[RMDB]
RNA sequence: GGGAACGACUCGAGUAGAGUCGAAAAACAGUCAGUUCGCUGACUGAGGGAAACGGGAGCCGGGCUUGGGACAAGAGCCAUCCCAAGUCCAAGGCCAAGUAGGCUCUAGUGAUGGUACGCCAUCACAAAAACUGGUCUACCUUCGGGUAGACCAGAAGAUACAAACAUAGUUCGCUAUGUUUGUAUCAAAAGAAACAACAACAACAAC
Reactivity to 2A3 in 0.01 (KOAc 150mM, MgCl2 10mM, bicine 150mM(pH8.5), 24C), signal-to-noise 6, nucleotides 027 to 156: a000c000a000g000u010c000a000g000u080u100c130g030c110u010g000a000c000u000g000a070g020g030g020a070a120a130c140g030g030g050a070g030c020c030g000g000g000c000u000u000g010g000g000a000c020a080a070g000a000g000c000c000a010u000c000c000c000a000a000g010u000c000c000a050a030g020g000c030c010a070a020g060u140a110g100g000c000u000c020u020a030g000u000g000a000u000g010g010u040a030c250g060c030c000a000u010c000a000c000a000a060a000a010a010c000u000g000g000u000c000u000a000c000c010u010u080c230g070g000g000u000a000g010a000c000c000a000g000a000a000
Reactivity to DMS in 0.01 (KOAc 150mM, MgCl2 10mM, bicine 150mM(pH8.5), 24C), signal-to-noise 1, nucleotides 027 to 156: a130c020a050g040u000c010a010g000u000u000c170g040c000u010g020a000c000u010g000a120g030g020g000a100a040a050c040g010g010g000a240g010c010c030g050g020g000c010u010u000g010g000g010a040c000a050a050g000a030g000c010c020a300u000c000c000c020a030a030g040u000c000c010a060a080g020g050c040c050a050a080g010u000a050g000g030c000u030c010u000a190g010u000g000a020u010g000g020u000a110c300g010c040c020a000u000c000a000c020a030a010a080a070a090c020u000g000g020u000c000u010a020c000c010u000u000c240g040g000g040u000a020g000a000c010c000a010g000a020a070
This 207-nucleotide RNA was probed chemically with 2A3 and DMS. Conditions: 150 mM KOAc, 10 mM MgCl2 and 150 mM bicine (pH 8.5), 24 C. Source: RMDB library M2RFPK, as collected in RNAgym. Values cover nucleotides 27 to 156. DMS adducts were read by reverse transcription with MarathonRT. For DMS, 2,821 sequencing reads were counted.